[RMDB]
RNA sequence: GGGAACGACUCGAGUAGAGUCGAAAAAACGAAUUCUUUAGCCUUACCGUCAGGGUCAGAUAUGAAUGACCAUUUAUCAGGAUCUCUUCGACCUAUUUUUUAACCAGUAGCGACUUGAUUGAAGAGUUUUUCUGGUUGUUUGAAGGAUAUUUAAAUAAGCAUUUCUAUAAUUCGUUAUAGAAAUGCUAAAAGAAACAACAACAACAAC
Reactivity to DMS in 0.01 (KOAc 150mM, MgCl2 10mM, bicine 150mM(pH8.5), 24C), signal-to-noise 2, nucleotides 027 to 156: a040a070c030g010a120a140u000u010c030u010u000u000a090g000c010c010u000u000a120c060c060g000u000c090a190g010g000g020u010c020a090g010a190u010a120u010g030a120a170u010g010a080c000c030a180u010u000u020a130u000c020a050g040g010a060u010c000u000c010u010u000c020g020a000c020c000u000a000u000u000u000u000u010u010a060a140c090c020a090g040u000a170g010c040g000a110c060u000u000g000a070u000u010g010a060a070g040a080g000u000u030u000u000u010c000u010g010g000u000u010g010u000u000u000g000a060a170g000g000a120u000a090u000u010u000a010a020a100u000a160
Reactivity to 2A3 in 0.01 (KOAc 150mM, MgCl2 10mM, bicine 150mM(pH8.5), 24C), signal-to-noise 3, nucleotides 027 to 156: a000a020c100g030a060a070u120u080c050u040u130u120a100g020c010c010u030u080a060c040c040g090u080c090a070g040g030g040u030c010a010g030a090u180a100u250g100a140a050u010g000a010c010c010a070u090u150u090a170u090c010a000g020g000a020u000c010u000c000u010u030c000g020a000c000c000u030a130u050u140u030u110u030u170a110a070c030c020a010g050u050a030g070c030g080a120c040u080u130g140a140u070u080g040a090a010g000a000g040u080u040u000u060u010c030u000g000g000u010u030g030u000u110u080g060a060a000g030g000a010u050a130u290u230u200a190a090a100u300a080
Source: RMDB library OK3TST, as collected in RNAgym. Chemical mapping of a 207-nucleotide RNA with DMS and 2A3. For DMS, 3,200 sequencing reads were counted. The RNA was probed in 150 mM KOAc, 10 mM MgCl2 and 150 mM bicine (pH 8.5) at 24 C.